This 177-nucleotide RNA was probed chemically with 2A3 and DMS. The RNA was probed in 150 mM KOAc, 10 mM MgCl2 and 150 mM bicine (pH 8.5) at 24 C.
RNA sequence: GGGAACGACUCGAGUAGAGUCGAAAAGAUAUGGACGGACAUGGGAGAGUACAAUCGGAAACGAUUGAAUACUCGAGGAUCAUGACCGUCCUAAGUCAAAAGCAACAACAGUUCGCUGUUGUUGCAAGCACUUACAGUAGUUCGCUACUGUAAGUGCAAAAGAAACAACAACAACAAC
Reactivity to 2A3 in 0.01 (KOAc 150mM, MgCl2 10mM, bicine 150mM(pH8.5), 24C), signal-to-noise 3, nucleotides 027 to 126: g000a000u010a010u040g000g000a000c010g000g000a000c000a010u010g010g000g020a030g000a000g010u010a010c010a010a000u000c010g010g030a020a000a000c010g000a010u020u020g040a200a170u110a090c000u000c010g020a120g030g010a000u000c000a010u000g020a010c010c000g000u010c000c000u000a000a000g000u000c000a000a030a070a120g000c000a000a000c000a000a000c000a010g000u080u100c280g140c210u000g000u010u000g000u000u000g000c000a000a020
Reactivity to DMS in 0.01 (KOAc 150mM, MgCl2 10mM, bicine 150mM(pH8.5), 24C), signal-to-noise 3, nucleotides 027 to 126: g000a020u000a000u010g000g000a000c000g020g000a120c010a010u010g000g000g000a020g000a030g020u010a110c000a010a010u000c000g010g000a000a000a030c000g010a000u000u000g000a230a260u000a000c000u000c010g020a100g030g010a010u010c010a010u000g000a060c010c000g010u000c000c000u000a000a060g000u010c000a090a080a140a160g000c000a000a010c000a010a020c000a020g000u010u000c290g010c000u000g000u000u010g000u000u010g010c020a030a060

Reactivities are given for positions 27 through 126. For 2A3, 13,905 sequencing reads were counted. For 2A3 the reverse transcriptase was SuperScript II with manganese.